[RMDB]
RNA sequence: GGGAACGACUCGAGUAGAGUCGAAAAGAUAUGGAAUACAGCGAUAAGCUCGUGGUCGGAAACGACCAUAGAGCUUUUGACGCUGUUCCUAAGUCAAAAGGUUUUGCCUGUUCGCAGGCAAAACCAACUACAAUACGUUCUUCGGAACGUAUUGUAGAAAAGAAACAACAACAACAAC
Reactivity to DMS in 0.01 (KOAc 150mM, MgCl2 10mM, bicine 150mM(pH8.5), 24C), signal-to-noise 5, nucleotides 027 to 126: g000a040u010a300u010g000g010a030a050u010a090c020a000g020c000g010a130u000a030a010g010c000u000c000g020u000g000g010u010c000g000g000a090a080a200c000g000a010c000c000a010u000a020g010a010g010c000u000u000u000u000g010a190c050g010c000u000g000u000u000c000c000u000a050a170g000u000c050a070a060a130a090g010g000u000u000u000u000g010c000c000u000g000u000u010c190g010c010a000g020g000c010a010a000a000a000c000c000a010a070
Reactivity to 2A3 in 0.01 (KOAc 150mM, MgCl2 10mM, bicine 150mM(pH8.5), 24C), signal-to-noise 3, nucleotides 027 to 126: g020a020u100a040u180g000g030a070a070u180a210c000a000g010c000g040a040u010a110a010g000c010u000c000g010u000g000g000u020c000g040g030a150a100a070c010g010a000c010c040a010u020a020g000a000g000c020u000u010u000u030g030a020c000g000c000u010g010u000u000c000c000u040a150a030g060u050c070a040a040a060a150g020g000u000u010u010u020g000c010c010u020g040u080u110c300g000c070a000g000g040c000a010a010a010a000c000c000a000a000